An RNA of 177 nucleotides, treated with 2A3 and DMS and read out base by base. Reactivities are given for positions 27 through 126. The 2A3 profile rests on 798 reads. Source: RMDB libraries RFM100 and RFMREP, as collected in RNAgym.
RNA sequence: GGGAACGACUCGAGUAGAGUCGAAAAACCUGUAUUCGAAAGUGAUCGUGGGCUGCCUGUGCCCUGGUCAUUGAUAGUGCAGGGAAAGAAAUCGCGGAAAGUGCUUCCCCGUGUUUGGAGGGUCCGCACUGCUCACCAGAUUCGUCUGGUGAGCAGUAAAAGAAACAACAACAACAAC
Reactivity to 2A3 in 0.01 (KOAc 150mM, MgCl2 10mM, bicine 150mM(pH8.5), 24C), signal-to-noise 2, nucleotides 027 to 126: a000c010c000u010g030u000a040u040u120c050g080a140a000a000g000u020g000a000u000c020g230u120g000g000g000c060u140g140c140c060u160g040u110g020c000c010c000u000g010g010u000c000a000u000u010g000a040u020a000g020u010g000c030a000g050g110g060a010a140a000g130a050a140a020u120c060g000c040g020g070a090a070a080g070u010g120c010u020u040c000c000c050c010g050u040g110u110u100u160g090g010a070g000g000g020u010c000c000g000c000
Reactivity to DMS in 0.01 (KOAc 150mM, MgCl2 10mM, bicine 150mM(pH8.5), 24C), signal-to-noise 2, nucleotides 027 to 126: a100c000c000u000g000u010a010u020u000c030g000a090a080a020g020u000g010a020u000c010g000u000g010g020g000c000u030g000c170c130u010g000u020g010c000c000c000u000g010g000u000c010a000u000u000g000a200u000a040g000u000g000c010a000g000g010g000a100a110a110g010a050a050a060u020c110g010c020g000g010a040a050a090g010u000g010c080u000u010c010c010c000c090g000u000g000u010u000u030g010g000a180g020g010g020u000c000c000g000c050